[RMDB]
The record gives the reactivity of an RNA of 177 nucleotides to DMS and 2A3. Conditions: 150 mM KOAc, 10 mM MgCl2 and 150 mM bicine (pH 8.5), 24 C. DMS adducts were read by reverse transcription with MarathonRT.

RNA sequence: GGGAACGACUCGAGUAGAGUCGAAAAUAAAUACAUAAAAGGACAGUUUUAUGAUUGUCAGCUUUGAGUUGAGGAUAUGUUCCAGACAUCUUAGUUUCCCUUACUUAUUUUUGGAGACAUUUCUCUCGAUAUCUGUAUGGUUCGCCAUACAGAUAUCAAAAGAAACAACAACAACAAC
Reactivity to DMS in 0.01 (KOAc 150mM, MgCl2 10mM, bicine 150mM(pH8.5), 24C), signal-to-noise 7, nucleotides 027 to 126: u010a030a030a060u010a050c040a070u030a090a030a070a070g000g000a040c030a030g010u000u000u030u030a080u040g000a030u000u000g000u000c030a120g010c040u000u000u010g000a150g010u000u000g010a050g010g000a060u010a040u010g000u010u010c020c010a100g000a050c090a020u010c100u010u010a050g010u000u000u000c000c000c010u010u020a100c130u010u010a080u000u010u010u010u010g010g000a070g010a050c170a090u010u010u000c000u000c020u000c300
Reactivity to 2A3 in 0.01 (KOAc 150mM, MgCl2 10mM, bicine 150mM(pH8.5), 24C), signal-to-noise 9, nucleotides 027 to 126: u080a000a040a010u160a020c020a010u150a050a050a010a010g130g010a030c020a040g010u010u020u080u160a200u210g070a040u020u040g030u030c050a030g070c030u020u030u060g060a120g030u030u050g050a070g040g020a030u040a030u230g100u080u000c010c000a000g010a020c020a060u010c020u050u030a050g020u040u030u020c020c020c000u010u070a080c040u070u100a130u180u160u040u090u090g080g010a060g010a030c030a070u030u050u010c030u000c000u010c030